[RMDB]
RNA sequence: GGGAACGACUCGAGUAGAGUCGAAAAGAUAUGGAUCACUCGGGAGACGGUCAGUCGGAAACGACUGCUACGUCGACGAUCGAGUGAGUCCUAAGUCAAAAGCUAUACGCCUUCGGGCGUAUAGCAACACUCUAUCCUGGUUCGCCAGGAUAGAGUGAAAAGAAACAACAACAACAAC
Reactivity to 2A3 in 0.01 (KOAc 150mM, MgCl2 10mM, bicine 150mM(pH8.5), 24C), signal-to-noise 2, nucleotides 027 to 126: g010a010u010a000u050g000g010a000u000c010a000c010u010c010g000g000g000a030g010a000c010g040g030u250c020a000g010u000c010g000g000a000a000a000c000g000a010c010u000g020c030u150a140c040g010u000c010g030a030c000g000a000u000c010g010a010g000u010g020a000g030u030c000c000u000a000a010g010u010c010a000a000a140a070g000c000u000a000u000a000c000g020c000c020u040u210c300g130g000g000c000g000u000a000u000a000g000c010a000a000
Reactivity to DMS in 0.01 (KOAc 150mM, MgCl2 10mM, bicine 150mM(pH8.5), 24C), signal-to-noise 3, nucleotides 027 to 126: g000a010u000a020u010g010g000a140u000c000a000c010u000c000g000g000g000a010g040a010c010g010g000u010c000a010g000u000c000g020g000a010a000a010c000g010a010c000u000g000c070u000a030c040g040u000c000g000a080c230g000a010u020c000g000a020g020u000g000a030g000u010c000c000u010a010a100g000u020c000a100a100a080a130g010c000u000a000u000a010c000g000c010c000u000u020c240g020g010g000c000g030u000a000u000a010g000c010a050a050